[RMDB]
RNA sequence: GGGAACGACUCGAGUAGAGUCGAAAAAUUGAUAAACGGCACCUAUAAGGUGGUGCCGAACCAGCGUGACCUACCAACACGCAACGAGCAGUCUGGUAUGACUGCAAACCUAUGGUUAACAAGAUAACCUUACUUCUGAGUUCGCUCAGAAGUAAGGAAAAGAAACAACAACAACAAC
Reactivity to 2A3 in 0.01 (KOAc 150mM, MgCl2 10mM, bicine 150mM(pH8.5), 24C), signal-to-noise 3, nucleotides 027 to 126: a000u060u060g030a050u110a070a110a030c010g000g010c000a000c000c010u090a110u040a300a110g210g020u070g000g000u000g000c000c000g000a000a000c030c010a030g010c000g000u010g020a170c010c040u030a050c040c030a020a020c020a000c020g000c020a010a040c060g030a020g000c000a000g010u000c010u110g170g060u300a110u240g000a000c010u010g000c000a020a020a030c030c010u120a120u150g050g000u080u050a060a020c030a060a010g040a150u080a080a050
Reactivity to DMS in 0.01 (KOAc 150mM, MgCl2 10mM, bicine 150mM(pH8.5), 24C), signal-to-noise 2, nucleotides 027 to 126: a140u010u000g000a120u010a050a070a130c000g010g020c010a020c020c000u000a080u030a160a090g030g020u010g000g000u000g050c000c030g000a020a030c060c040a070g020c000g020u000g020a030c050c010u000a060c010c010a180a060c000a000c010g010c000a120a070c160g000a150g000c010a020g000u000c030u000g030g020u000a040u010g000a000c030u000g020c000a020a020a110c040c020u000a040u000g030g000u000u010a020a180c200a050a130g000a070u010a100a110

The record gives the reactivity of an RNA of 177 nucleotides to 2A3 and DMS. Reactivities are rounded to 0.1 and cut off at 0 and 3. Conditions: 150 mM KOAc, 10 mM MgCl2 and 150 mM bicine (pH 8.5), 24 C. For DMS the reverse transcriptase was MarathonRT. Reactivities are given for positions 27 through 126.